[RMDB]
Notes
The data come from the RNA Mapping Database (RMDB), library OK3TST. This 207-nucleotide RNA was probed chemically with DMS and 2A3. The reactions ran in a buffer of 150 mM KOAc, 10 mM MgCl2 and 150 mM bicine (pH 8.5), at 24 C. Reactivities are given for positions 27 through 156. The 2A3 profile rests on 1,127 reads.
RNA sequence: GGGAACGACUCGAGUAGAGUCGAAAAAACACCAGCGAUGUGAGUGUGGCCUGGGGACCUGGACAGGCUGGCUUCGGGGACAUUUCCUCUUGAGUGGAAUCUGGCAUGUGUGAUGUCUUUGCAGGUGAUGUACAAGAAAGACUAUGAAAAAAACAAAGUAUUUAAUCAGGUUCGCCUGAUUAAAUACAAAAGAAACAACAACAACAAC
Reactivity to DMS in 0.01 (KOAc 150mM, MgCl2 10mM, bicine 150mM(pH8.5), 24C), signal-to-noise 1, nucleotides 027 to 156: a030a060c040a050c030c000a090g030c080g030a150u000g000u020g010a120g040u000g000u000g060g010c030c050u010g030g010g030g000a090c080c020u010g030g010a160c040a050g030g020c030u000g020g000c030u000u000c050g030g020g010g000a100c080a070u000u010u000c000c010u000c030u000u000g010a140g080u030g000g010a130a050u000c040u000g020g000c030a080u000g000u000g030u010g010a100u000g010u000c010u000u000u000g030c030a080g000g010u000g020a070u000g030u000a100c050a070a060g000a100a080a090g010a060c040u000a100u010g000a000a000a100a040a030a050a100c090a070a080a090
Reactivity to 2A3 in 0.01 (KOAc 150mM, MgCl2 10mM, bicine 150mM(pH8.5), 24C), signal-to-noise 2, nucleotides 027 to 156: a010a000c060a070c020c000a030g040c020g050a070u020g070u040g100a070g030u070g040u070g020g040c010c030u050g010g010g010g040a060c000c010u040g000g020a010c020a020g020g030c010u000g040g020c030u060u060c060g010g000g010g040a000c020a070u120u170u020c020c010u030c030u060u100g070a030g000u070g000g060a010a020u070c050u030g020g000c040a040u030g010u010g000u040g100a070u020g030u020c050u050u080u110g020c020a030g000g030u040g030a050u050g020u060a060c040a070a040g030a130a060a010g030a070c040u080a180u170g050a090a000a060a040a000a020a020c040a020a110a010